[RMDB]
RNA sequence: GGGAACGACUCGAGUAGAGUCGAAAAGAUAUGGACCGGUAGGGAGAAGCAGGUCGGAAACGACCUGGCUUCGAAGAACUAUACGGUCCUAAGUCAAAGUAGAUGAACCCUUCGGGGUUCAUCUACACUACAUGAAAAGCUUCGGCUUUUCAUGUAGAAAAGAAACAACAACAACAAC
Reactivity to DMS in 0.01 (KOAc 150mM, MgCl2 10mM, bicine 150mM(pH8.5), 24C), signal-to-noise 1, nucleotides 027 to 126: g000a010u000a010u010g000g000a020c000c000g000g010u000a020g000g050g020a000g000a000a000g010c000a010g000g010u010c000g000g000a000a010a060c010g000a020c020c010u010g000g010c010u000u010c000g000a130a170g010a180a300c000u010a000u000a100c020g050g010u000c000c000u000a000a060g000u020c000a110a130a190g060u000a010g000a010u000g000a020a000c000c000c010u000u000c290g050g020g000g020u000u000c000a030u000c000u010a000c030a300